RNA sequence: GGGAACGACUCGAGUAGAGUCGAAAAGAAGAGCAGGCAGAUAAUCUUGUGCAGUAUGCAUGCUCAUAUCUCCACAAGAAGAAAGGCAGCAAAAGAAUAACUGCCACUGCACAAGUGGAGCCGCAGACACUGCGUGCAUAUUCGUAUGCACGCAGUGAAAAGAAACAACAACAACAAC
Reactivity to 2A3 in 0.01 (KOAc 150mM, MgCl2 10mM, bicine 150mM(pH8.5), 24C), signal-to-noise 6, nucleotides 027 to 126: g110a060a010g010a010g000c010a030g020g010c010a000g030a150u160a160a100u180c010u010u020g000u010g010c010a010g000u090a020u150g010c020a040u020g010c010u010c030a030u050a030u020c050u000c020c020a090c050a030a070g140a060a010g050a060a070a040g020g000c000a010g000c070a060a030a100a000g210a110a080u090a100a020c000u000g010c000c000a000c000u000g000c000a010c000a020a010g010u030g020g020a030g020c060c030g040c060a020g010a040
Reactivity to DMS in 0.01 (KOAc 150mM, MgCl2 10mM, bicine 150mM(pH8.5), 24C), signal-to-noise 4, nucleotides 027 to 126: g000a110a050g000a000g000c010a030g010g030c000a100g030a180u030a090a070u030c030u020u000g010u000g010c050a000g010u000a040u010g020c000a050u000g040c000u030c000a100u010a050u010c020u000c000c080a180c180a140a140g000a110a120g010a080a120a100g000g000c020a000g000c260a010a060a100a150g020a190a070u020a110a220c000u000g000c000c000a090c000u000g000c030a010c000a010a010g030u010g000g000a050g000c020c030g020c100a090g000a180
Structure probing data (2A3 and DMS) for a 177-nucleotide construct. Source: RMDB library OK1LIB, as collected in RNAgym. The reactions ran in a buffer of 150 mM KOAc, 10 mM MgCl2 and 150 mM bicine (pH 8.5), at 24 C. DMS adducts were read by reverse transcription with MarathonRT. For DMS, 6,056 sequencing reads were counted. For 2A3, 7,039 sequencing reads were counted. 2A3 adducts were read by reverse transcription with SuperScript II with manganese. Values are in units of 0.01, from 0 to 300, in steps of 10.